[RMDB]
Source: RMDB library OK3TST, as collected in RNAgym. Chemical mapping of a 207-nucleotide RNA with 2A3. 2A3 adducts were read by reverse transcription with SuperScript II with manganese. The RNA was probed in 150 mM KOAc, 10 mM MgCl2 and 150 mM bicine (pH 8.5) at 24 C.
RNA sequence: GGGAACGACUCGAGUAGAGUCGAAAAAGCGCGGCUUGAACGAGAGCUCUCGUAAGACUAUGACUGACUUCUUACGAGAGUCUUUCAAGCCGAACUGAGUGUAAGUGGUAAGAAGUCAGUCAUAGUCUUACCACUGCUCUCACUCAGUUCGAACGCACGAACCAUCUAUGUUCGCAUAGAUGGUUCGAAAAGAAACAACAACAACAAC
Reactivity to 2A3 in 0.01 (KOAc 150mM, MgCl2 10mM, bicine 150mM(pH8.5), 24C), signal-to-noise 1, nucleotides 027 to 156: a000g040c020g000c040g010g000c030u140u190g010a080a000c060g000a010g000a000g010c000u020c000u000c040g020u000a000a000g000a000c000u000a010u000g000a010c000u010g000a000c010u020u000c000u000u010a010c050g050a100g010a010g210u000c000u000u030u030c000a010a020g000c000c010g000a010a000c030u060g090a040g090u170g020u150a150a120g030u020g200g030u070a000a000g010a020a000g000u010c020a000g010u020c000a000u040a010g000u000c000u000u000a000c000c000a000c000u000g000c000u000c000u000c010a000c020u080c000a000g000u160u120c010g050a040a000c030g000c010a090